[RMDB]
RNA sequence: GGGAACGACUCGAGUAGAGUCGAAAAUAAAUCUUAUUCGUAAGAUUUACUUGAACGCUGCAUGCGGCAGCGCGCUCGCUUGCGCACGCACGCGCAAUAAAAAUCUGGGGACAUUCGUGUCCCCAAACUUGGUAGAAGGAUUCGUCCUUCUACCAAGAAAAGAAACAACAACAACAAC
Reactivity to DMS in 0.01 (KOAc 150mM, MgCl2 10mM, bicine 150mM(pH8.5), 24C), signal-to-noise 4, nucleotides 027 to 126: u000a010a010a010u000c000u000u000a000u000u020c180g020u000a010a010g000a010u010u000u000a010c090u000u000g010a110a110c050g010c020u000g040c000a100u000g020c120g030g020c070a050g010c010g020c160g000c080u000c090g010c140u010u010g000c010g020c010a040c080g010c130a020c150g010c010g000c040a040a080u010a030a050a080a070a090u010c140u000g010g000g010g000a020c000a030u000u010c180g010u000g010u000c010c010c010c000a000a000a030
Reactivity to 2A3 in 0.01 (KOAc 150mM, MgCl2 10mM, bicine 150mM(pH8.5), 24C), signal-to-noise 3, nucleotides 027 to 126: u020a000a010a010u000c010u010u010a020u040u080c110g030u020a010a010g000a000u000u000u020a050c030u050u110g090a110a010c020g020c030u060g010c020a070u150g100c010g190g020c060a010g000c010g000c020g050c020u120c030g070c090u040u070g030c000g000c020a010c030g120c010a020c060g010c000g020c020a040a100u160a090a140a020a010a020u080c110u090g000g000g000g000a010c000a000u040u050c180g060u030g000u020c000c000c000c000a010a000a000